[RMDB]
RNA sequence: GGGAACGACUCGAGUAGAGUCGAAAACAGGCGGCGCUGGCACUGUUGCUGCGGCUCGCUGACCGGGGAGCGGCGUGAAGCUGCACCGGCUGGCCCUGACCAAUUACCGCGGCAUCGCACACCGUGAGACAGAUUGGCAAUUCGUUGCCAAUCUGUCAAAAGAAACAACAACAACAAC
Reactivity to 2A3 in 0.01 (KOAc 150mM, MgCl2 10mM, bicine 150mM(pH8.5), 24C), signal-to-noise 1, nucleotides 027 to 126: c020a030g010g010c000g000g000c050g000c080u160g080g000c020a000c070u180g050u150u060g000c000u000g000c000g060g000c040u040c080g030c040u030g020a060c010c010g070g000g000g020a300g010c000g000g000c000g050u180g190a140a050g010c010u020g010c000a000c020c000g040g000c000u010g020g020c010c000c060u070g070a090c110c040a060a160u190u080a060c000c050g000c000g040g020c030a030u000c050g020c020a050c000a000c000c030g000u060g050a050
Reactivity to DMS in 0.01 (KOAc 150mM, MgCl2 10mM, bicine 150mM(pH8.5), 24C), signal-to-noise 1, nucleotides 027 to 126: c070a130g020g010c040g040g010c050g000c070u000g020g010c000a080c050u030g020u000u000g000c000u010g030c040g000g030c040u000c180g030c000u000g000a060c020c020g010g000g000g020a280g030c000g030g000c000g040u000g000a120a100g020c010u010g040c010a100c050c000g000g030c010u000g020g000c030c190c010u000g000a120c110c070a120a100u000u000a110c150c010g010c000g000g000c010a010u000c060g000c090a180c110a070c000c030g020u000g020a150